[RMDB]
RNA sequence: GGGAACGACUCGAGUAGAGUCGAAAAGCGUUACGGCUGGGUGUAACCCAACUCUAGGUGUGCUGAUUAGCGGGCUUGACUCCGUAACAAAUAGGCACUGGUGGUAAAAAGCAUCCCACCUACUCACAAAGCUCCAAAUUCUUCGGAAUUUGGAGAACUUCUUUCUGUAGUUCGCUACAGAAAGAAGAAAAGAAACAACAACAACAAC
Reactivity to 2A3 in 0.01 (KOAc 150mM, MgCl2 10mM, bicine 150mM(pH8.5), 24C), signal-to-noise 4, nucleotides 027 to 156: g030c010g030u080u070a030c050g030g040c060u010g010g040g020u070g060u110a100a110c000c010c010a060a060c050u060c030u090a070g070g030u100g020u030g110c010u030g000a220u150u080a040g030c010g010g000g030c030u080u110g020a080c050u010c030c000g000u020a010a000c020a030a080a020u140a060g060g000c020a020c070u050g020g010u010g000g020u030a050a060a030a100a050g040c020a030u070c020c000c010a020c010c010u050a090c030u060c050a100c070a100a120a040g070c000u000c000c000a000a000a000u000u010c010u020u060c110g090g000a000a000u010u000u000g000g000a000g000a010a000
Reactivity to DMS in 0.01 (KOAc 150mM, MgCl2 10mM, bicine 150mM(pH8.5), 24C), signal-to-noise 1, nucleotides 027 to 156: g010c110g000u000u010a010c050g020g040c040u000g000g180g020u000g000u000a040a300c000c010c000a030a050c000u020c020u000a090g020g020u020g000u010g010c020u000g000a130u010u000a160g060c000g000g020g000c090u000u000g020a210c070u000c000c000g000u020a100a160c090a020a100a140u000a110g000g000c040a030c060u010g020g020u010g010g000u000a010a020a080a040a080g000c040a110u010c050c010c010a070c060c030u000a030c060u000c030a110c090a130a040a170g020c000u000c010c000a000a000a030u000u000c000u000u000c300g020g000a030a010u000u030u000g010g010a000g030a020a020

This 207-nucleotide RNA was probed chemically with 2A3 and DMS. DMS adducts were read by reverse transcription with MarathonRT. The RNA was probed in 150 mM KOAc, 10 mM MgCl2 and 150 mM bicine (pH 8.5) at 24 C.